[RMDB]
RNA sequence: GGGAACGACUCGAGUAGAGUCGAAAAGGCACAGACGGACACUCCUUCUGACGUACAGUCUCACUCGCAUGGCGAGUCAGAGUCAUGACUGUGAGCGAGUACGACUGAGGGUCAGUUCGAGUGUGCAGCAGAGCUGACUAUUCGUAGUCGGCUCUGCAAAAGAAACAACAACAACAAC
Reactivity to DMS in 0.01 (KOAc 150mM, MgCl2 10mM, bicine 150mM(pH8.5), 24C), signal-to-noise 7, nucleotides 027 to 126: g010g010c040a020c040a050g010a150c050g010g010a030c030a200c070u000c000c020u000u000c010u000g000a050c020g010u000a050c010a080g000u010c000u000c090a030c000u000c090g010c010a040u010g010g010c020g010a080g010u010c120a040g000a220g010u010c100a040u000g010a040c020u000g000u000g000a040g010c010g000a110g020u000a060c060g000a030c010u000g010a100g000g010g000u000c060a080g010u000u000c080g000a040g020u000g010u000g000c020a110
Reactivity to 2A3 in 0.01 (KOAc 150mM, MgCl2 10mM, bicine 150mM(pH8.5), 24C), signal-to-noise 6, nucleotides 027 to 126: g090g000c020a010c010a030g180a050c040g020g000a000c010a010c030u030c000c000u010u010c010u010g020a020c000g030u050a010c010a010g040u010c010u000c010a010c000u030c020g030c020a020u100g040g000c040g070a030g110u050c040a050g040a020g110u040c020a050u010g040a090c000u020g000u010g020a010g000c010g020a070g010u000a010c030g010a020c000u000g010a010g050g010g020u010c020a010g000u000u000c000g000a020g050u010g000u000g000c000a000
The record gives the reactivity of an RNA of 177 nucleotides to DMS and 2A3. It was measured as part of the RMDB library OK2TRN. For 2A3 the reverse transcriptase was SuperScript II with manganese.